[RMDB]
RNA sequence: GGGAACGACUCGAGUAGAGUCGAAAAGAUAUGGAUGCACUAGCUUCGGGAGCUGCCUGGAUAAGUACAUCGGAAACGAUGUACGUAACAGGACCCAGCAUCGAUCGAAGCUAGUGCAUCCUAAGUCCGUGUCUAAGGUGUUCGCACCUUAGACACGAAAAGAAACAACAACAACAAC
Reactivity to DMS in 0.01 (KOAc 150mM, MgCl2 10mM, bicine 150mM(pH8.5), 24C), signal-to-noise 1, nucleotides 027 to 126: g040a000u020a250u000g000g010a000u000g030c010a000c000u000a000g050c010u000u000c030g010g000g050a120g120c080u030g000c000c010u000g000g000a110u000a040a260g010u000a000c070a010u000c000g000g000a150a190a180c000g010a050u000g020u000a020c000g010u000a090a260c010a040g020g000a290c290c300c150a020g010c030a230u000c100g010a060u010c080g000a000a000g000c000u000a000g000u000g010c000a020u000c010c000u000a040a070g000u000c040